Chemical mapping of a 207-nucleotide RNA with 2A3 and DMS. For DMS the reverse transcriptase was MarathonRT. The 2A3 profile rests on 1,226 reads. It was measured as part of the RMDB library OK3TST.
RNA sequence: GGGAACGACUCGAGUAGAGUCGAAAACUCGAGACGCGGUUGCGAUACUCGCGGAGGUUGCUGCUGGACGCGACCUAUGACGUGGGCAAGCUGAUUCCCAGCACCGAGGAACUAGAGUCGGCGAAGACGCGUUGUCCAGCAGAGUCUAGAGACAGGAUGUAUGGUACAGUUUCGACUGUACCAUACAAAAAGAAACAACAACAACAAC
Reactivity to 2A3 in 0.01 (KOAc 150mM, MgCl2 10mM, bicine 150mM(pH8.5), 24C), signal-to-noise 2, nucleotides 027 to 156: c010u010c010g010a050g000a000c020g010c060g040g010u090u140g000c050g060a060u080a070c020u040c080g000c020g000g030a100g000g030u050u110g050c050u000g000c000u000g000g020a010c010g040c020g060a120c000c010u100a160u150g090a060c030g050u090g020g040g040c090a090a030g020c030u000g010a130u060u080c000c000c000a000g050c070a090c010c040g070a100g090g020a070a030c060u090a100g030a020g050u000c030g000g020c050g060a180a040g040a050c020g000c000g020u060u300g000u030c000c010a000g020c020a000g000a000g010u030c030u080a020g020a010g020a130c030a030g040g080a080
Reactivity to DMS in 0.01 (KOAc 150mM, MgCl2 10mM, bicine 150mM(pH8.5), 24C), signal-to-noise 2, nucleotides 027 to 156: c010u020c020g000a050g020a110c020g010c000g060g010u000u030g010c080g040a180u000a050c030u000c070g000c020g000g000a110g020g020u000u000g010c010u000g000c030u010g050g000a120c050g000c030g010a140c030c010u000a050u000g000a090c050g020u000g020g000g030c050a100a220g020c020u000g000a110u020u000c000c010c020a070g000c010a220c090c080g010a170g050g050a160a120c020u020a030g000a050g000u000c010g000g000c100g000a090a100g010a040c030g010c010g000u000u000g020u000c010c010a080g000c040a090g030a090g010u000c010u000a090g000a180g020a130c060a110g020g010a300